[RMDB]
About this RNA: Structure probing data (DMS and 2A3) for a 177-nucleotide construct. Reactivities are given for positions 27 through 126. Conditions: 150 mM KOAc, 10 mM MgCl2 and 150 mM bicine (pH 8.5), 24 C. Reactivities are rounded to 0.1 and cut off at 0 and 3. It was measured as part of the RMDB library OK2TST.

RNA sequence: GGGAACGACUCGAGUAGAGUCGAAAAAACCGAGCUGUAACUACGGGGAUCUAUUGGAUGCGAGGCGUAAUCAAGCAGCGUGGCGAUGGGUCUGGUGUCCACCGCAAAGGAGAAGACAUGCCAUAUGUAGUGAUCGAGAAUUCGUUCUCGAUCACUAAAAAGAAACAACAACAACAAC
Reactivity to DMS in 0.01 (KOAc 150mM, MgCl2 10mM, bicine 150mM(pH8.5), 24C), signal-to-noise 2, nucleotides 027 to 126: a090a070c040c020g020a110g000c020u010g010u000a070a100c060u000a080c060g020g000g000g000a050u000c060u000a120u010u020g000g000a060u000g000c010g000a100g020g000c020g000u000a070a100u020c120a100a120g000c020a070g020c080g000u000g020g010c010g010a040u000g000g000g000u000c020u020g030g030u000g000u000c030c000a110c030c060g000c040a060a070a050g000g010a080g010a060a050g020a020c060a030u000g000c050c020a040u010a050u000g010
Reactivity to 2A3 in 0.01 (KOAc 150mM, MgCl2 10mM, bicine 150mM(pH8.5), 24C), signal-to-noise 1, nucleotides 027 to 126: a000a000c050c030g020a020g000c060u070g030u000a020a070c040u070a030c050g000g000g000g060a000u000c000u000a050u120u200g070g000a040u060g020c030g040a030g030g000c050g020u060a050a120u070c040a070a020g070c000a020g060c030g090u040g050g020c030g010a040u030g000g000g000u030c040u010g090g000u080g020u010c010c020a030c040c000g020c010a100a060a040g080g030a090g030a040a090g030a010c020a040u060g040c030c030a070u040a080u140g200